[RMDB]
RNA sequence: GGGAACGACUCGAGUAGAGUCGAAAAGAUAUGGACAUCAAGAACGAUAAGUCGAGACAAAAAUCGGUCAUCGGAAACGAUGACCGAUUUUUGUCUUCGACUUUUGACGUUCGAAGUGUCCUAAGUCGAAUAAAAUAAACUUCGGUUUAUUUUAUUCAAAAGAAACAACAACAACAAC
Reactivity to DMS in 0.01 (KOAc 150mM, MgCl2 10mM, bicine 150mM(pH8.5), 24C), signal-to-noise 2, nucleotides 027 to 126: g010a130u020a300u030g000g010a010c010a010u000c010a050a300g000a030a000c000g020a190u000a010a010g010u000c000g010a060g000a000c000a010a010a030a000a000u000c020g030g000u000c000a010u030c010g030g000a120a080a160c000g010a000u000g010a000c010c000g010a000u000u000u000u000u000g000u000c000u000u000c010g000a010c010u000u000u000u010g010a150c100g000u010u000c000g010a250a240g000u000g000u000c000c000u010a020a090g010u010c120